[RMDB]
RNA sequence: GGGAACGACUCGAGUAGAGUCGAAAACUAGCCCAUCGGCCUAUUGUCGUCUACGUGAACGGUGAGAUGCUUAACAACGUUGUCCGGCUGGAUACGGAUGAGGGCUGGGCAGAGUUCAACGUUAAGGAUGUUGACGGCCUAUUCCUCAUCGAGAAUGUCUAAGAUCUUUGUUCGCAAAGAUCUUAGAAAAAGAAACAACAACAACAAC
Reactivity to 2A3 in 0.01 (KOAc 150mM, MgCl2 10mM, bicine 150mM(pH8.5), 24C), signal-to-noise 5, nucleotides 027 to 156: c040u020a030g020c000c000c020a040u050c030g040g040c030c030u060a060u080u160g050u050c030g030u000c020u040a070c060g060u080g090a140a020c020g050g040u070g020a090g010a030u080g040c020u100u080a080a020c060a030a010c060g040u040u020g040u020c040c030g060g000c030u030g040g030a040u070a140c060g080g000a000u000g000a000g000g010g000c000u020g000g000g000c030a030g040a010g300u100u030c010a000a000c010g010u050u190a170a080g140g050a090u140g010u010u000g000a010c000g000g010c000c000u000a010u000u000c000c000u000c000a000u000c010g000a000g000a050a070u110g000
Reactivity to DMS in 0.01 (KOAc 150mM, MgCl2 10mM, bicine 150mM(pH8.5), 24C), signal-to-noise 3, nucleotides 027 to 156: c020u010a120g000c000c000c000a120u010c050g020g030c020c020u000a110u000u000g020u000c050g030u010c050u000a080c130g030u000g000a080a060c020g000g000u000g020a180g010a090u000g000c050u010u000a100a150c060a080a120c060g010u010u000g000u000c000c050g040g000c070u000g010g010a140u000a120c070g020g010a020u000g000a060g010g020g000c080u000g010g000g020c010a050g010a090g020u010u010c000a000a010c020g020u000u000a130a210g040g020a080u000g010u000u000g000a040c000g000g000c010c000u010a060u000u000c020c000u000c000a000u000c010g010a080g020a120a080u010g000